RNA sequence: GGGAACGACUCGAGUAGAGUCGAAAAUGAUAUUGGCAAUCCUAAAGGAAUUCCUAUUGUUGAUGACCCUGUGGUUGAUUGGCAUUAUUUUGAUGCACAGCCCUUGACCAGGAAGGUACAACAGCUUGACCGAAUGCGUUCGCGCAUUCGAAAAGAAACAACAACAACAAC
Reactivity to DMS in 0.01 (KOAc 150mM, MgCl2 10mM, bicine 150mM(pH8.5), 24C), signal-to-noise 4, nucleotides 027 to 129: u050g030a000u010a060u010u050g000g050c040a000a000u040c040c060u000a050a120a130g030g000a130a150u000u000c010c010u080a000u010u040g030u050u020g020a000u040g030a180c010c010c020u010g010u020g020g030u000u000g020a100u010u000g010g000c010a000u060u000a100u040u040u100u080g010a030u020g030c030a070c000a050g020c040c040c050u080u030g000a110c080c040a070g040g030a110a060g020g030u020a060c060a080a070c110a040g000c070u040u030g040a090c060
Reactivity to 2A3 in 0.01 (KOAc 150mM, MgCl2 10mM, bicine 150mM(pH8.5), 24C), signal-to-noise 5, nucleotides 027 to 129: u120g020a010u050a040u120u120g020g040c030a020a030u020c030c020u120a060a090a040g090g000a070a140u080u030c010c010u090a070u120u120g050u110u070g000a120u040g030a040c000c000c000u020g070u110g090g020u030u000g050a170u030u090g090g010c010a000u020u040a110u070u220u150u260g040a020u060g030c010a000c000a070g000c000c000c000u030u020g000a010c000c000a000g020g050a020a050g010g020u000a050c010a100a000c040a010g000c030u070u080g040a080c000